[RMDB]
RNA sequence: GGGAACGACUCGAGUAGAGUCGAAAAGAUAAUAUUUAAAUACUCAUGUGACACAUGCAAACAUGCACAAAGUUAGCUGUCAUGGUUAGUGCAACAUUGUUUUCUGUACCUGAGGUUUAAGCUUUGGAAAACUAAGACACAAAUUCACUGUAGACACGAAUUAACGUAUCUUCGGAUACGUUAAUUCAAAAGAAACAACAACAACAAC
Reactivity to 2A3 in 0.01 (KOAc 150mM, MgCl2 10mM, bicine 150mM(pH8.5), 24C), signal-to-noise 6, nucleotides 027 to 156: g020a020u190a210a040u100a190u090u120u110a100a080a050u190a180c020u020c040a040u080g040u070g050a010c010a000c010a060u060g030c030a030a050a040c060a090u060g040c030a020c010a050a110a060g060u090u040a020g050c030u030g070u290c070a090u110g060g010u040u060a040g010u020g040c010a040a020c030a090u040u050g060u040u050u060u050c050u030g020u020a040c000c020u030g030a010g030g000u030u050u070a020a020g020c030u060u080u110g030g020a050a050a030a020c040u070a090a050g080a030c040a000c020a070a190a040u130u120c040a040c100u080g050u110a010g040a090c030a010c150
Reactivity to DMS in 0.01 (KOAc 150mM, MgCl2 10mM, bicine 150mM(pH8.5), 24C), signal-to-noise 3, nucleotides 027 to 156: g010a190u010a070a100u020a130u010u000u000a110a050a100u000a060c040u000c020a080u010g010u010g030a150c040a080c050a100u000g020c110a060a070a090c080a080u000g020c040a060c050a110a090a170g010u010u000a090g010c010u010g010u010c140a130u000g000g000u000u000a100g000u000g000c050a130a050c070a070u000u000g020u000u000u000u000c040u000g020u000a050c090c030u000g020a040g040g000u000u010u000a030a080g020c040u010u000u000g030g000a080a030a050a070c040u010a080a120g000a080c040a040c040a020a090a110u000u000c050a070c060u010g030u010a100g000a180c070a070c110